[RMDB]
This 207-nucleotide RNA was probed chemically with DMS and 2A3. The 2A3 profile rests on 869 reads. For 2A3 the reverse transcriptase was SuperScript II with manganese. Conditions: 150 mM KOAc, 10 mM MgCl2 and 150 mM bicine (pH 8.5), 24 C. The data come from the RNA Mapping Database (RMDB), library OK3TST.
RNA sequence: GGGAACGACUCGAGUAGAGUCGAAAACAUUCAUUAGAUGAAAAAGUUUCUAAACGUAUUAAGAAAACUGAUCCAAUUCCAGAAGGAUGGUUUAAAGGUCGAAAAAUGAAAUUUUAACUACGAGGCAUAGCUCAGAAGGAAGAGCAAGGACCUUCUAGUUAAAUGAGGGAUUCGUCCCUCAUUUAACAAAAGAAACAACAACAACAAC
Reactivity to DMS in 0.01 (KOAc 150mM, MgCl2 10mM, bicine 150mM(pH8.5), 24C), signal-to-noise 1, nucleotides 027 to 156: c040a140u010u000c040a100u020u000a120g020a070u020g000a100a050a170a130a090g020u000u000u000c010u010a080a080a290c070g010u000a120u000u010a130a080g000a120a140a090a020c060u000g010a020u000c020c040a070a110u000u010c100c060a120g020a090a120g040g080a090u000g000g000u010u000u000a040a070a080g010g000u010c020g010a000a050a050a100a140u010g000a050a060a200u000u000u000u000a000a090c020u020a030c110g020a120g000g000c010a090u000a100g000c030u000c030a070g010a040a070g000g020a090a020g000a040g000c020a090a160g030g000a130c090c000u020u010c060u000a210
Reactivity to 2A3 in 0.01 (KOAc 150mM, MgCl2 10mM, bicine 150mM(pH8.5), 24C), signal-to-noise 2, nucleotides 027 to 156: c020a010u100u170c000a020u090u130a110g040a160u130g010a080a080a000a000a130g040u050u040u020c110u180a170a110a110c030g060u160a150u190u140a150a060g050a010a050a030a040c050u160g020a030u040c000c000a010a050u180u070c040c000a000g060a140a000g120g000a050u080g000g020u000u040u120a150a110a020g070g040u060c040g130a010a060a040a000a120u080g030a070a100a130u100u080u040u010a080a030c100u120a060c070g040a000g010g000c020a040u040a050g000c000u010c070a020g020a060a010g060g030a010a090g010a010g050c020a040a020g070g010a020c050c010u010u010c060u030a080